The data come from the RNA Mapping Database (RMDB), library OK1LIB. Structure probing data (2A3) for a 177-nucleotide construct. Values are in units of 0.01, from 0 to 300, in steps of 10. Conditions: 150 mM KOAc, 10 mM MgCl2 and 150 mM bicine (pH 8.5), 24 C. Values cover nucleotides 27 to 126.

RNA sequence: GGGAACGACUCGAGUAGAGUCGAAAAUGUAUCUGAAGGAUCCGGUGAGCUACGGUACAUCUAAAAGAGCUCCUCGUCGCAAAGCUCUCUCCGUGCGUGACGAACGAAAUGUGAUUCGUGCUGCCUCCGUGGGGCGAUGAUUCGUCAUCGCCCCACGAAAAGAAACAACAACAACAAC
Reactivity to 2A3 in 0.01 (KOAc 150mM, MgCl2 10mM, bicine 150mM(pH8.5), 24C), signal-to-noise 1, nucleotides 027 to 126: u110g000u020a050u010c040u070g070a110a010g090g040a020u000c040c040g000g140u180g010a060g050c010u010a020c020g000g010u040a030c030a040u060c040u130a000a000a000a180g060a000g000c020u000c000c000u020c010g110u000c030g040c100a050a100a000g030c000u000c000u000c000u030c030c020g020u000g070c070g060u090g040a020c050g000a100a000c000g000a000a030a010u200g020u080g020a180u040u050c010g000u010g040c020u000g000c000c000u000c020